[RMDB]
Structure probing data (2A3 and DMS) for a 207-nucleotide construct. Reactivities are given for positions 27 through 156. In probing experiments dimethyl sulfate is read out at A N1 and C N3, which are open when not base-paired. The 2A3 profile rests on 2,696 reads.
RNA sequence: GGGAACGACUCGAGUAGAGUCGAAAAGUAAUAGAUAACAGGAUGACGAGAAAGGGUGCGCUGAUAUCCUGUACGAAUGCUAGCAGUAAAUAGAAUAGCGCUCCUAAUACAACUAGCAACAAAAGGAUAAGGUAUCGUGAUGUCAAUCACAUUGCGACCGUCCUAUAUGAUUCGUCAUAUAGGACGGAAAAGAAACAACAACAACAAC
Reactivity to 2A3 in 0.01 (KOAc 150mM, MgCl2 10mM, bicine 150mM(pH8.5), 24C), signal-to-noise 4, nucleotides 027 to 156: g030u030a020a110u040a110g100a060u080a120a010c010a020g030g010a020u040g050a030c070g040a050g100a130a080a050g040g020g010u030g010c010g000c000u020g040a020u020a010u090c010c000u000g020u060a010c060g090a130a050u070g000c030u040a000g000c050a020g060u140a040a080a090u090a040g100a060a070u050a060g010c010g010c010u040c000c000u050a070a030u100a050c010a040a030c030u020a010g000c030a020a040c010a070a120a050a010g040g020a050u070a080a060g110g010u090a030u110c010g000u010g000a010u010g020u050c070a030a040u130c010a000c010a030u010u020g020c010g000a000
Reactivity to DMS in 0.01 (KOAc 150mM, MgCl2 10mM, bicine 150mM(pH8.5), 24C), signal-to-noise 3, nucleotides 027 to 156: g000u000a060a120u040a060g000a120u000a120a150c020a100g010g030a090u010g020a160c080g010a130g010a150a150a090g000g000g040u000g010c090g030c030u000g000a140u000a090u000c020c000u010g010u000a140c120g000a120a130u010g000c010u000a010g020c050a120g000u000a030a080a160u000a080g010a070a070u000a130g020c110g050c040u010c050c010u000a070a110u000a090c040a070a090c020u000a010g010c010a040a110c050a070a050a070a050g000g000a100u000a060a080g000g010u000a100u000c010g000u010g060a010u010g000u020c040a100a150u010c140a100c030a030u000u010g020c000g010a080